RNA sequence: GGGAACGACUCGAGUAGAGUCGAAAAGGGUGGUUCGCCACCCCAUCUGAUAUGGAGAGGGUGGCAUAGGGAGAAACGGCCAUCGGAAACGAUGGAAGUUUCGAGGAUCUAUGCGUAACAUCCCUCUCCUAAGUCCUCCUAGGAGCUUCGGCUCCAAUACAUAUAGGAAUUUCGAUUCCUAUAUGUAAAAAGAAACAACAACAACAAC
Reactivity to 2A3 in 0.01 (KOAc 150mM, MgCl2 10mM, bicine 150mM(pH8.5), 24C), signal-to-noise 3, nucleotides 027 to 156: g000g000g000u030g010g050u060u130c240g090c050c000a010c000c010c000c000a090u080c080u090g010a010u000a000u040g000g000a000g000a000g000g000g000u010g010g000c010a000u000a000g000g000g000a010g000a010a000a000c000g020g010c010c000a010u000c000g010g000a020a000a000c000g000a000u010g000g000a010a010g000u010u000u000c010g030a200g000g020a000u000c000u000a000u000g000c000g010u010a010a010c010a060u070c000c010c010u000c000u000c000c000u000a000a000g000u000c000c010u020c000c020u080a110g010g000a010g000c020u120u130c290g100g000c010u020c000c020a000a010
Reactivity to DMS in 0.01 (KOAc 150mM, MgCl2 10mM, bicine 150mM(pH8.5), 24C), signal-to-noise 2, nucleotides 027 to 156: g000g030g080u000g000g020u000u000c230g020c000c000a030c020c000c000c000a050u000c050u000g000a120u000a160u000g000g010a050g000a040g000g020g030u000g000g000c010a030u000a000g000g000g010a070g010a010a020a020c000g020g010c000c000a010u000c020g010g010a160a070a160c000g020a030u010g000g020a010a010g030u000u010u000c000g010a100g020g000a090u010c000u000a030u010g010c000g020u000a050a040c070a110u000c000c010c020u010c000u000c000c000u010a000a070g000u000c010c090u000c030c020u000a130g000g000a040g030c000u010u010c230g030g010c000u000c000c000a030a250
Chemical mapping of a 207-nucleotide RNA with 2A3 and DMS. The 2A3 profile rests on 10,815 reads. The reactions ran in a buffer of 150 mM KOAc, 10 mM MgCl2 and 150 mM bicine (pH 8.5), at 24 C. 2A3 adducts were read by reverse transcription with SuperScript II with manganese.